Conditions: 150 mM KOAc, 10 mM MgCl2 and 150 mM bicine (pH 8.5), 24 C. Chemical mapping of a 177-nucleotide RNA with DMS. It was measured as part of the RMDB library TTRDEL. In probing experiments dimethyl sulfate is read out at A N1 and C N3, which are open when not base-paired.
RNA sequence: GGGAACGACUCGAGUAGAGUCGAAAAGAUAUGGAGGUAAUCCGAGCCAUAUCGUUUGACGUCGGAAACGACCGAGAUAUGGACCCUCGGUUACCUCCUAAGUCAAACAGCCUGUUCGCAGGCUGAACAGUCUGUGCGUGUUCGCACGCACAGACUGAAAAGAAACAACAACAACAAC
Reactivity to DMS in 0.01 (KOAc 150mM, MgCl2 10mM, bicine 150mM(pH8.5), 24C), signal-to-noise 1, nucleotides 027 to 126: g000a050u010a300u000g000g000a010g010g010u000a020a000u050c000c010g000a040g100c000c000a010u000a000u010c000g000u000u020u000g010a110c300g000u010c000g010g020a100a060a160c070g020a000c010c020g010a070g010a020u000a010u000g020g000a140c160c300c040u000c010g030g010u000u000a000c040c010u000c000c000u000a000a010g000u020c070a170a060a190c030a010g010c020c000u010g010u000u000c190g000c020a000g000g000c000u000g010a090a130